[RMDB]
RNA sequence: GGGAACGACUCGAGUAGAGUCGAAAAAUUAACCCCGGCACAUGCAAAAGUUAUGACAGCCAUAUAUGAGAACAGUCCCUUUGCAAUUCUUGACAAAGUACUAGCCAGGGUUGAUAAUUCAGCCAGCGAGAUAGGUCAAAUUCGUUUGACCUAUCUCAAAAGAAACAACAACAACAAC
Reactivity to DMS in 0.01 (KOAc 150mM, MgCl2 10mM, bicine 150mM(pH8.5), 24C), signal-to-noise 3, nucleotides 027 to 126: a040u000u000a060a080c020c000c000c030g020g030c020a170c190a100u000g000c030a030a060a060a090g010u000u020a090u020g020a060c080a090g030c040c040a090u000a100u000a070u000g010a180g000a090a040c060a090g010u000c020c140c040u000u000u020g010c020a040a120u000u000c030u000u010g010a140c220a080a020a070g010u000a030c190u000a130g010c000c010a080g010g000g000u000u010g000a030u010a070a140u000u010c100a110g010c020c010a100g000c230
Reactivity to 2A3 in 0.01 (KOAc 150mM, MgCl2 10mM, bicine 150mM(pH8.5), 24C), signal-to-noise 2, nucleotides 027 to 126: a000u030u020a020a010c000c000c000c000g000g010c010a030c010a080u050g040c020a060a020a030a040g040u200u170a130u220g030a030c010a040g030c090c020a050u140a010u000a030u220g220a180g040a160a020c040a020g030u000c050c010c050u000u020u050g010c000a040a070u120u070c010u040u060g030a040c010a030a080a010g020u040a060c050u050a060g000c000c020a010g000g010g000u010u000g000a000u000a090a050u070u060c020a070g120c020c000a050g090c050
Background
Source: RMDB library OK2TST, as collected in RNAgym. An RNA of 177 nucleotides, treated with DMS and 2A3 and read out base by base. Reactivities are given for positions 27 through 126. For 2A3, 1,805 sequencing reads were counted. The reactions ran in a buffer of 150 mM KOAc, 10 mM MgCl2 and 150 mM bicine (pH 8.5), at 24 C. The DMS profile rests on 1,501 reads.